[RMDB]
RNA sequence: GGGAACGACUCGAGUAGAGUCGAAAAACUGGAGUACAGUGGUGUGAUCUCAGCUCACUGCAACUUCCGCCCCCCCGGGUUCAAGCGAUUCUCCUGCUUCAGCCUUCCGAGUAGCUGGGAUUACAGGGACUAGUUAGACAUUCGUGUCUAACUAGUCAAAAGAAACAACAACAACAAC
Reactivity to 2A3 in 0.01 (KOAc 150mM, MgCl2 10mM, bicine 150mM(pH8.5), 24C), signal-to-noise 2, nucleotides 027 to 126: a000c040u050g040g000a080g120u180a070c030a070g060u110g080g170u000g050u030g020a030u020c020u000c000a000g020c010u040c060a030c020u060g060c070a100a060c060u200u050c080c040g100c050c010c020c000c000c000c020g000g040g020u000u020c040a040a000g020c000g040a040u130u000c040u010c050c040u010g000c000u020u040c020a000g000c010c000u120u020c050c040g070a040g050u030a010g000c000u010g010g040g000a020u020u040a000c010a000g080g050
Reactivity to DMS in 0.01 (KOAc 150mM, MgCl2 10mM, bicine 150mM(pH8.5), 24C), signal-to-noise 4, nucleotides 027 to 126: a090c090u000g010g010a100g020u010a120c090a030g000u010g020g010u000g030u010g000a020u010c020u000c030a070g020c010u000c100a030c020u000g000c060a060a040c080u010u000c060c050g020c030c000c010c020c000c010c020g010g000g010u000u000c170a040a050g000c030g000a100u010u000c030u000c040c030u000g000c010u010u000c120a030g000c010c020u000u010c080c080g020a070g000u010a030g010c010u000g000g010g000a030u010u000a040c070a100g010g010

The record gives the reactivity of an RNA of 177 nucleotides to 2A3 and DMS. Conditions: 150 mM KOAc, 10 mM MgCl2 and 150 mM bicine (pH 8.5), 24 C. Reactivities are given for positions 27 through 126. DMS adducts were read by reverse transcription with MarathonRT.